Structure probing data (2A3 and DMS) for a 170-nucleotide construct. The DMS profile rests on 77,044 reads. Source: RMDB library 15KLIB, as collected in RNAgym. For DMS the reverse transcriptase was MarathonRT. High 2A3 reactivity points to a flexible backbone, as in loops and unpaired stretches. Conditions: 150 mM KOAc, 10 mM MgCl2 and 150 mM bicine (pH 8.5), 24 C.
[RMDB]
RNA sequence: GGGAACGACUCGAGUAGAGUCGAAAAAGGAGUCAGGGGAAGCCAGAACGACUGAGAAAGAAAAGAGAGCAACGGGGCUAGCUGCCGGGUGUUCCAUCCAUGGGAUCGGUGCCGAGUGAGGCUUAUCAAACAAGAGGAUUCGUCCUCUUGAAAAGAAACAACAACAACAAC
Reactivity to 2A3 in 0.01 (KOAc 150mM, MgCl2 10mM, bicine 150mM(pH8.5), 24C), signal-to-noise 8, nucleotides 027 to 129: a010g050g010a020g040u070c050a020g040g010g010g040a030a020g030c020c020a040g020a070a030c060g030a020c030u060g020a010g040a060a050a010g060a030a040a030a010g050a000g000a010g010c010a030a080c040g010g000g010g040c010u030a040g010c010u010g010c020c000g000g010g010u050g040u060u010c030c010a020u010c040c030a090u150g050g000g020a030u050c040g000g030u030g000c000c010g010a010g020u080g030a010g010g000c000u050u060a130u110c080a030a040a060
Reactivity to DMS in 0.01 (KOAc 150mM, MgCl2 10mM, bicine 150mM(pH8.5), 24C), signal-to-noise 8, nucleotides 027 to 129: a050g000g000a020g020u020c100a070g020g000g010g030a060a050g020c040c030a070g010a110a070c130g020a080c050u060g000a050g000a030a040a030g000a050a050a070a080g010a050g000a030g000c040a040a050c070g000g000g000g000c090u020a060g020c040u000g000c000c010g010g000g000u000g000u000u000c020c030a070u020c050c110a060u000g000g000g000a000u010c060g000g000u030g030c040c020g010a040g030u020g010a090g000g030c050u000u000a080u030c100a110a080a160